[RMDB]
RNA sequence: GGGAACGACUCGAGUAGAGUCGAAAACAGUCCAAGGCUUCACUAAGCCAUUUUACCUCACCCCCACUGGUGUUCGCCGACCGUUGACUAUUCUCUACAAACCACAAAGACAUUUGAACACUAUACCACGUCGCUCACUAUUCGUAGUGAGCGACGUAAAAGAAACAACAACAACAAC
Reactivity to 2A3 in 0.01 (KOAc 150mM, MgCl2 10mM, bicine 150mM(pH8.5), 24C), signal-to-noise 1, nucleotides 027 to 126: c060a020g040u020c060c060a020a000g030g000c000u000u000c030a000c120u250a080a000g030c020c000a010u050u040u060u080a000c000c000u030c060a060c010c070c000c010c010a000c040u020g000g030u080g010u000u080c050g030c000c000g050a080c000c000g020u000u020g000a000c040u000a090u180u000c040u040c000u030a000c060a090a000a000c000c000a000c110a040a140a040g090a000c060a050u000u090u180g000a020a000c050a000c050u060a050u130a190c000c000